The record gives the reactivity of an RNA of 177 nucleotides to DMS and 2A3. The RNA was probed in 150 mM KOAc, 10 mM MgCl2 and 150 mM bicine (pH 8.5) at 24 C.

[RMDB]
RNA sequence: GGGAACGACUCGAGUAGAGUCGAAAAUCAGGAUUAUAAUGAGUGCCGCCCGCACUCUACGCUGAAUUAUCAGACGCCGUCUGAAUUUGCGGCGGCCUGGAGAAAGGGUAAUUCUGAUAGUGAAGGACUUACGGACCUGAUUCGUCAGGUCCGUAAGAAAAGAAACAACAACAACAAC
Reactivity to DMS in 0.01 (KOAc 150mM, MgCl2 10mM, bicine 150mM(pH8.5), 24C), signal-to-noise 2, nucleotides 027 to 126: u000c020a020g000g020a040u000u000a010u010a110a070u000g000a030g030u000g030c010c100g030c080c050c030g010c000a010c020u010c010u010a060c050g050c010u030g010a090a130u000u000a120u000c000a000g010a070c020g010c060c040g020u000c120u020g010a090a200u000u000u010g010c000g000g000c000g030g010c180c010u000g020g010a080g020a100a090a140g000g010g010u000a010a000u000u000c000u000g000a020u010a070g000u020g020a150a130g000g000a140
Reactivity to 2A3 in 0.01 (KOAc 150mM, MgCl2 10mM, bicine 150mM(pH8.5), 24C), signal-to-noise 1, nucleotides 027 to 126: u000c000a000g000g000a010u050u070a070u110a250a200u090g020a020g020u000g000c000c050g080c020c040c000g000c000a000c000u010c010u000a040c090g010c010u000g010a050a060u140u020a060u100c010a030g010a030c090g040c110c120g080u030c090u090g140a180a200u120u140u230g060c000g000g000c000g000g000c000c000u000g020g020a110g110a020a050a010g000g000g000u010a000a000u000u000c010u010g030a010u000a010g110u130g120a040a030g080g030a030
Notes
For 2A3, 868 sequencing reads were counted. For DMS the reverse transcriptase was MarathonRT.